[RMDB]
Chemical mapping of a 207-nucleotide RNA with 2A3 and DMS.
RNA sequence: GGGAACGACUCGAGUAGAGUCGAAAAUCAGGACGGAAAUGAGGCCAGGGAACUAAAGGGGUAGAAGUCUGAAGAGGAAUGGUUUUGCAUGGGAAAACUGUGCCAGGUCUAAAACUGGGCUGAACACUAUUUGUCCCCAACUCUCUGGCCCGGUCCAACGCUAAUAAUCAUUCGUGAUUAUUAGCGUAAAAGAAACAACAACAACAAC
Reactivity to 2A3 in 0.01 (KOAc 150mM, MgCl2 10mM, bicine 150mM(pH8.5), 24C), signal-to-noise 5, nucleotides 027 to 156: u140c040a050g010g010a010c040g060g150a100a090a120u220g020a190g010g000c010c010a010g000g000g000a020a010c030u090a190a110a120g010g000g010g000u040a040g060a080a000g010u010c040u100g100a130a040g020a050g060g070a050a090u130g020g000u000u040u020u060g010c020a020u010g010g000g030a050a220a070a120c020u010g000u010g020c000c010a010g000g000u010c040u070a060a080a030a040c040u050g000g020g000c010u010g060a100a010c060a030c080u120a210u180u170u180g100u120c000c000c000c000a010a030c010u000c000u000c000u010g000g000c010c000c000g000g000u000c000c000a000
Reactivity to DMS in 0.01 (KOAc 150mM, MgCl2 10mM, bicine 150mM(pH8.5), 24C), signal-to-noise 2, nucleotides 027 to 156: u000c020a070g020g000a090c030g010g010a070a130a090u000g010a200g020g020c000c020a130g020g010g020a030a100c060u030a050a090a080g010g010g050g070u000a090g010a080a050g000u000c050u000g010a130a120g020a160g010g000a050a060u000g000g010u010u000u010u000g010c040a140u010g050g030g010a180a030a030a080c050u010g040u010g020c010c020a160g030g000u010c020u000a040a030a100a210c140u000g010g010g050c020u010g000a080a070c090a030c080u000a100u000u000u010g020u000c000c000c010c020a100a140c190u000c010u000c000u010g000g000c000c000c000g020g000u020c010c010a100
For 2A3 the reverse transcriptase was SuperScript II with manganese. The RNA was probed in 150 mM KOAc, 10 mM MgCl2 and 150 mM bicine (pH 8.5) at 24 C.